[RMDB]
RNA sequence: GGGAACGACUCGAGUAGAGUCGAAAAGCAUGAUUACUUAACACCAGAUGAAGCUGAACAACAUUUCCUUGCUGUUCGGAAAUUGCACAAGCUACACCAAGGAGAAGCAAUGAGACUUGGUGAAAAGCCUUUCACCAUUAUUCGUAAUGGUGAAAGGAAAAGAAACAACAACAACAAC
Reactivity to DMS in 0.01 (KOAc 150mM, MgCl2 10mM, bicine 150mM(pH8.5), 24C), signal-to-noise 7, nucleotides 027 to 126: g020c100a050u010g000a120u030u030a050c040u010u010a080a080c060a120c030c020a090g000a100u030g010a090a050g010c020u000g000a040a030c040a040a060c070a040u010u010u030c050c050u000u010g010c100u000g010u000u000c040g000g000a020a040a080u030u020g000c080a070c180a070a080g010c080u010a120c020a010c010c010a010a020g000g020a080g000a180a040g000c290a060a060u010g000a190g000a070c020u010u000g000g010u000g010a040a040a060a130g000
Reactivity to 2A3 in 0.01 (KOAc 150mM, MgCl2 10mM, bicine 150mM(pH8.5), 24C), signal-to-noise 9, nucleotides 027 to 126: g070c050a070u120g040a110u190u180a080c040u080u120a090a030c030a060c060c030a030g030a200u150g060a090a030g040c020u020g020a040a010c010a020a020c010a080u030u050u090c020c010u030u060g040c020u030g040u060u030c010g020g040a040a090a080u100u130g020c050a040c030a120a060g020c020u080a020c000a000c010c000a010a000g050g030a100g080a080a050g100c110a070a130u150g040a060g030a130c000u010u000g000g000u010g010a050a050a000a000g020